The record gives the reactivity of an RNA of 177 nucleotides to 2A3 and DMS. The reactions ran in a buffer of 150 mM KOAc, 10 mM MgCl2 and 150 mM bicine (pH 8.5), at 24 C. For DMS, 1,380 sequencing reads were counted. Values are in units of 0.01, from 0 to 300, in steps of 10. For 2A3 the reverse transcriptase was SuperScript II with manganese. The 2A3 profile rests on 1,508 reads. The data come from the RNA Mapping Database (RMDB), library OK1LIB.
[RMDB]
RNA sequence: GGGAACGACUCGAGUAGAGUCGAAAAGUGACACCAUUGCCGGCCAGUACGAGGUCAAGGGCUGCAUCGCGCACGGCGGAAUGGGCUGGAUAUACCUGGCCCUGGACCGCAACGUCAACGACCGGCCUGCGUGGACUACGUUCGCGUAGUCCACGCAAAAAGAAACAACAACAACAAC
Reactivity to 2A3 in 0.01 (KOAc 150mM, MgCl2 10mM, bicine 150mM(pH8.5), 24C), signal-to-noise 2, nucleotides 027 to 126: g080u070g110a040c000a000c050c000a130u090u250g040c000c000g050g000c030c000a020g000u050a040c020g030a030g040g080u050c070a070a080g030g020g000c010u070g020c040a140u160c040g000c020g020c010a090c100g000g000c070g010g030a040a080u080g000g010g000c000u010g100g050a040u080a000u030a300c020c080u030g080g000c000c000c000u000g000g030a000c000c010g000c030a110a090c040g030u000c010a020a030c040g020a030c000c050g050g000c000c010
Reactivity to DMS in 0.01 (KOAc 150mM, MgCl2 10mM, bicine 150mM(pH8.5), 24C), signal-to-noise 1, nucleotides 027 to 126: g000u010g000a060c160a040c050c000a130u060u100g010c000c070g000g000c010c000a110g010u050a050c090g020a040g000g000u000c080a030a090g010g000g050c000u000g020c110a190u010c080g050c120g030c140a090c220g030g140c050g000g000a160a120u030g030g000g000c000u000g040g000a080u000a080u020a210c200c030u000g060g000c000c010c000u010g060g000a180c000c000g000c120a010a080c070g010u000c030a040a150c010g000a010c080c000g000g010c000c230